The record gives the reactivity of an RNA of 207 nucleotides to DMS and 2A3. The reactions ran in a buffer of 150 mM KOAc, 10 mM MgCl2 and 150 mM bicine (pH 8.5), at 24 C. It was measured as part of the RMDB library OK3TST.

RNA sequence: GGGAACGACUCGAGUAGAGUCGAAAAGUUACACUUGUUGCAUUCAAUAUCAUUGCGUUAUAUAUUGGUCACGAUCAUCAACCAUCUGAUUCUUGAAGUUGUUUUGUGUCGGUGUAACGCAGAUAGAACCGGAUAUAUGUCGUCUGAUAUUAGUGUAAAGCUGUUGCAUAUUCGUAUGCAACAGCUUAAAAGAAACAACAACAACAAC
Reactivity to DMS in 0.01 (KOAc 150mM, MgCl2 10mM, bicine 150mM(pH8.5), 24C), signal-to-noise 2, nucleotides 027 to 156: g010u000u020a040c040a060c120u000u000g040u020u000g000c030a130u030u010c130a080a070u010a020u000c020a070u000u010g030c000g000u000u000a070u000a060u010a110u000u000g050g010u030c000a120c080g030a100u000c100a200u020c020a030a050c020c000a090u000c050u000g010a090u000u010c050u000u000g010a150a140g030u010u010g010u000u000u000u010g040u000g000u000c040g040g020u000g020u010a010a060c020g020c030a080g010a150u010a050g010a070a060c050c000g010g020a070u000a070u010a040u010g020u000c030g010u010c300u020g010a050u010a030u010u000a050g010u010g030u010a100
Reactivity to 2A3 in 0.01 (KOAc 150mM, MgCl2 10mM, bicine 150mM(pH8.5), 24C), signal-to-noise 2, nucleotides 027 to 156: g020u010u080a010c030a060c040u070u090g010u080u050g070c020a060u000u090c050a000a000u010a040u020c050a090u060u120g040c010g010u080u020a030u000a000u000a010u030u090g070g010u070c050a040c160g080a140u110c030a020u070c030a020a070c080c020a060u000c020u010g100a150u110u100c030u060u130g070a190a040g010u000u020g020u020u040u000u040g050u040g100u040c050g010g030u010g020u000a010a010c030g000c050a030g020a030u080a060g030a040a020c020c020g030g010a000u010a010u000a010u140g140u060c030g030u020c080u010g010a010u000a000u020u040a020g050u000g010u030a040
2A3 adducts were read by reverse transcription with SuperScript II with manganese.